[RMDB]
RNA sequence: GGGAACGACUCGAGUAGAGUCGAAAAAGUGAUAAUAUAUCAAUCAAAACAGAAUAUGAGAAUGAAUAUGAAUUCUAUGAUGAAACACAAGAUCAAAGUACACAACUAGUAGGUUACGACAUUAAACUCAAAACCAAUGAGGAUGAUUUUGUGGAUGGUCAGCUUAAUCGUUCGCGAUUAAGCUGACAAAAGAAACAACAACAACAAC
Reactivity to 2A3 in 0.01 (KOAc 150mM, MgCl2 10mM, bicine 150mM(pH8.5), 24C), signal-to-noise 1, nucleotides 027 to 156: a000g050u020g000a000u020a300a000u110a020u030a050u010c020a120a060u020c050a300a180a140a120c000a020g230a150a080u160a150u300g050a100g050a070a070u110g080a100a030u260a000u210g020a170a060u080u050c000u020a050u110g080a020u020g060a100a050a000c000a000c000a020a010g000a010u050c030a100a000a000g050u020a000c050a000c020a070a210c050u050a010g130u000a000g030g000u020u070a000c030g000a000c000a080u270u180a120a130a100c070u000c070a000a000a000a230c000c040a000a000u110g000a000g040g110a070u020g000a000u070u010u000u010g000u030g000g040a000u110g150